[RMDB]
RNA sequence: GGGAACGACUCGAGUAGAGUCGAAAAGAAAAGAAACAAAAGGACCGCGGUGUGCGUCUCACACAGACGGAGACCGGUCGUCUGGAAAAUAAAAGGGUCUCUAGCAGACCGCUAGGAAAGAAAGAAAGGGUAAGUAUGAGUUCGCUCAUACUUACCCAAAAGAAACAACAACAACAAC
Reactivity to DMS in 0.01 (KOAc 150mM, MgCl2 10mM, bicine 150mM(pH8.5), 24C), signal-to-noise 2, nucleotides 027 to 126: g020a060a020a040a040g000a100a080a100c100a010a040a130a210g000g020a030c010c170g030c040g000g050u000g010u020g010c050g000u000c000u030c160a120c270a150c290a050g000a030c000g010g030a030g000a020c010c030g000g040u010c060g000u000c000u070g000g000a060a080a070a060u080a030a080a050a010g000g010g020u000c000u010c010u030a030g020c060a040g000a020c120c040g000c060u000a090g000g020a060a010a080g000a100a110a070g000a090a060a080
Reactivity to 2A3 in 0.01 (KOAc 150mM, MgCl2 10mM, bicine 150mM(pH8.5), 24C), signal-to-noise 2, nucleotides 027 to 126: g090a000a050a010a040g100a010a090a010c060a050a060a040a040g080g000a100c040c160g030c070g080g060u030g090u040g100c000g000u000c060u010c010a150c000a030c000a010g000a020c010g000g040a000g060a020c000c000g000g000u040c000g010u000c000u110g010g100a070a100a030a040u080a000a190a100a050g100g000g000u020c000u010c000u000a020g060c010a000g040a120c070c000g010c070u050a010g010g080a160a000a000g050a030a130a030g070a070a110a020